[RMDB]
RNA sequence: GGGAACGACUCGAGUAGAGUCGAAAAGCCAGAACGACUGGGAAAGGAAAGAAAGCAACGGGGCUAGCUGCCGGGUGUUCCAUCCAUGGGAUCGGUGCCGAGUGAGGCUUAUCCCGGGGGGAUUGCCGAGCCCUAUAUAGUUCGCUAUAUAGGGCUCAAAAGAAACAACAACAACAAC
Reactivity to 2A3 in 0.01 (KOAc 150mM, MgCl2 10mM, bicine 150mM(pH8.5), 24C), signal-to-noise 2, nucleotides 027 to 126: g020c010c000a000g050a060a040c050g060a040c040u070g020g000g050a050a030a070g010g020a080a070a060g050a010a090a030g040c020a020a030c060g020g000g050g020c020u040a030g010c030u040g020c040c000g030g000g020u020g010u090u000c020c000a030u010c010c030a120u170g000g020g030a030u050c050g050g030u050g060c000c010g010a060g060u090g060a030g000g030c000u020u030a050u000c000c010c000g000g000g000g000g000g000a050u060u130g030c030c020
Reactivity to DMS in 0.01 (KOAc 150mM, MgCl2 10mM, bicine 150mM(pH8.5), 24C), signal-to-noise 4, nucleotides 027 to 126: g010c030c010a100g010a170a080c120g000a080c070u010g010g000g000a060a090a070g000g010a050a080a070g000a080a080a080g000c050a060a070c060g010g000g000g000c090u010a070g010c050u010g000c060c030g000g010g030u000g010u000u000c010c020a080u000c040c060a070u010g010g000g030a030u000c140g030g000u010g020c030c010g010a100g000u010g030a130g000g000c020u000u000a070u000c010c000c000g000g000g000g010g020g000a130u020u000g020c220c110
The record gives the reactivity of an RNA of 177 nucleotides to 2A3 and DMS. Source: RMDB library 15KREP, as collected in RNAgym. For 2A3 the reverse transcriptase was SuperScript II with manganese. The reactions ran in a buffer of 150 mM KOAc, 10 mM MgCl2 and 150 mM bicine (pH 8.5), at 24 C. For DMS, 3,415 sequencing reads were counted.